Record summary: This 177-nucleotide RNA was probed chemically with 2A3 and DMS. Conditions: 150 mM KOAc, 10 mM MgCl2 and 150 mM bicine (pH 8.5), 24 C. For DMS, 15,826 sequencing reads were counted. Source: RMDB library OK1LIB, as collected in RNAgym. 2A3 adducts were read by reverse transcription with SuperScript II with manganese. Reactivities are given for positions 27 through 126.
[RMDB]
RNA sequence: GGGAACGACUCGAGUAGAGUCGAAAACAAAGCAAAAACGUUGGGGAGAAAAAGCGGAACAAUGUGUGGGUUGUGGCGCUGAAACCGCAAUUACCAACUGGCGGGGUGGAUGGACCGCGACAUGUGAACCAUAAGAAAGCUUCGGCUUUCUUAUGGUAAAAGAAACAACAACAACAAC
Reactivity to 2A3 in 0.01 (KOAc 150mM, MgCl2 10mM, bicine 150mM(pH8.5), 24C), signal-to-noise 5, nucleotides 027 to 126: c030a000a090a000g140c050a070a080a030a040a030c060g020u050u030g000g030g090g000a050g120a050a150a000a010a020g020c020g000g040a070a010c050a100a140u120g070u010g020u060g040g100g000u020u030g020u010g020g000c010g000c100u080g010a060a020a010c000c010g000c040a010a030u090u090a100c010c030a020a030c040u040g020g000c020g000g000g010g060u090g040g030a070u040g010g010a010c000c000g020c010g040a040c040a050u240g040u020g090a010
Reactivity to DMS in 0.01 (KOAc 150mM, MgCl2 10mM, bicine 150mM(pH8.5), 24C), signal-to-noise 6, nucleotides 027 to 126: c080a110a130a140g030c160a060a050a060a100a050c180g010u020u010g010g000g000g010a160g000a090a080a030a070a080g000c000g000g000a100a070c080a050a040u030g000u010g040u000g010g000g000u010u000g010u010g000g000c020g010c050u020g000a060a060a100c030c010g020c040a050a060u020u030a130c040c030a040a030c060u000g000g000c030g010g000g000g000u020g000g000a100u010g010g010a110c030c020g000c020g000a060c160a050u030g010u030g010a110